[RMDB]
RNA sequence: GGGAACGACUCGAGUAGAGUCGAAAAAACGCUUCACAACCUGAAAGAAGCGCCUGUUAUCAGGACGGUUGAUCCAUUUACCGGUGCUGACCUCUGCAAACACCGGGUUGCAGAACAUCGCGACGGACAAGGGAGGAUACCUUCGGGUAUCCUCCAACCUACUCAUUUACUUCGGUAAAUGAGUAGGAAAAGAAACAACAACAACAAC
Reactivity to 2A3 in 0.01 (KOAc 150mM, MgCl2 10mM, bicine 150mM(pH8.5), 24C), signal-to-noise 5, nucleotides 027 to 156: a000a010c010g000c000u010u010c020a040c010a070a010c000c000u010g000a000a010a010g010a000a010g000c000g110c010c000u160g010u230u220a170u300c020a010g010g000a010c040g020g020u020u030g030a080u040c040c060a110u090u100u150a120c020c020g040g020u070g000c020u020g030a050c020c040u020c000u040g000c000a020a070a030c050a090c140c060g080g080g000u000u000g000c000a000g010a080a020c010a040u110c040g000c020g050a050c010g030g020a040c070a070a100g080g000g000a010g000g010a000u000a010c010c010u040u100c160g070g000g000u000a000u010c000c000u000c010c000a000a000
Reactivity to DMS in 0.01 (KOAc 150mM, MgCl2 10mM, bicine 150mM(pH8.5), 24C), signal-to-noise 2, nucleotides 027 to 156: a070a080c000g030c010u000u010c020a140c060a020a300c000c010u010g010a110a170a160g010a000a040g010c000g030c010c040u000g030u000u000a180u000c070a070g000g010a140c030g000g010u000u000g010a210u010c050c050a140u000u000u000a040c050c000g010g050u010g010c010u010g020a100c110c080u010c060u020g020c000a100a060a020c020a280c140c090g060g000g060u000u000g030c010a070g000a030a110c070a050u000c000g010c010g010a090c040g000g000a060c100a140a090g000g000g000a000g040g020a020u000a010c000c020u000u010c300g110g010g050u010a010u000c000c010u000c000c000a000a020